[RMDB]
RNA sequence: GGGAACGACUCGAGUAGAGUCGAAAAGUAAGAUGAUUCGUCAUCUUACGAACCCGAUGUAGCGGCACAUACCGAGCUUCAUACAUCUAAGAGUGCAAAUAAUGGCGCGUGGUUUCGACCACGCGAACAGACACUUGUACUUCGGUACAAGUGUCUGAAAAGAAACAACAACAACAAC
Reactivity to DMS in 0.01 (KOAc 150mM, MgCl2 10mM, bicine 150mM(pH8.5), 24C), signal-to-noise 2, nucleotides 027 to 126: g000u000a000a000g000a000u000g000a000u000u000c200g020u000c000a000u000c000u000u000a000c000g000a050a160c000c000c020g000a020u000g010u000a030g000c300g050g000c020a140c140a100u000a080c140c140g020a130g020c010u000u000c090a210u000a030c020a020u000c020u000a040a090g040a100g000u000g000c150a110a060a080u010a100a130u000g000g030c010g010c000g000u000g010g010u010u010u010c180g000a040c020c000a000c000g000c000g000a050a050
Reactivity to 2A3 in 0.01 (KOAc 150mM, MgCl2 10mM, bicine 150mM(pH8.5), 24C), signal-to-noise 2, nucleotides 027 to 126: g000u000a000a020g000a000u020g000a000u030u070c120g010u000c100a000u000c010u000u000a010c000g000a000a050c000c010c030g000a000u010g000u030a020g030c020g050g050c040a050c030a140u170a150c080c080g050a050g030c000u070u040c070a080u010a090c030a020u000c040u090a070a020g170a080g140u190g020c090a080a030a040u230a130a080u300g230g030c000g000c020g000u000g000g040u010u050u070c090g080a030c000c000a000c010g020c020g000a000a000
Description: Conditions: 150 mM KOAc, 10 mM MgCl2 and 150 mM bicine (pH 8.5), 24 C. This 177-nucleotide RNA was probed chemically with DMS and 2A3. In probing experiments dimethyl sulfate is read out at A N1 and C N3, which are open when not base-paired. For DMS the reverse transcriptase was MarathonRT. Reactivities are rounded to 0.1 and cut off at 0 and 3. It was measured as part of the RMDB library M2PK50.